An RNA of 177 nucleotides, treated with DMS and 2A3 and read out base by base. For 2A3 the reverse transcriptase was SuperScript II with manganese. Values cover nucleotides 27 to 126.
[RMDB]
RNA sequence: GGGAACGACUCGAGUAGAGUCGAAAAACCUGUGCUGUCCAUCAGGGGAUUUGAAUCCAAGGACGGGUACAACAAUGGACAGUAAUUUGGACUCUAGGGAACUUCAUGUUUGAUUUAUGUAAUAAUACUCAGCUAUAUAGUUCGCUAUAUAGCUGAGAAAAGAAACAACAACAACAAC
Reactivity to DMS in 0.01 (KOAc 150mM, MgCl2 10mM, bicine 150mM(pH8.5), 24C), signal-to-noise 3, nucleotides 027 to 126: a070c020c010u000g040u000g000c010u000g000u000c000c010a040u000c130a160g010g000g000g000a170u000u000u000g000a170a060u010c020c010a110a190g020g020a110c170g000g010g020u000a040c030a030a030c150a120a030u010g000g000a020c020a010g020u000a040a070u020u000u010g010g010a060c030u000c030u000a060g010g000g010a050a090c150u000u000c050a060u010g000u000u000u020g000a090u000u020u010a040u030g000u010a080a080u000a060a090u000a110
Reactivity to 2A3 in 0.01 (KOAc 150mM, MgCl2 10mM, bicine 150mM(pH8.5), 24C), signal-to-noise 2, nucleotides 027 to 126: a010c000c000u000g030u050g000c000u010g000u000c000c000a040u060c080a120g000g000g050g100a010u070u000u170g030a060a030u000c010c010a060a050g090g010a060c000g000g010g010u050a040c020a060a000c020a030a040u030g000g010a000c000a000g040u030a010a050u140u080u040g060g020a020c010u000c010u100a100g060g030g040a010a040c010u130u140c090a100u070g130u100u060u110g120a080u000u070u190a110u150g040u050a080a120u080a140a010u040a140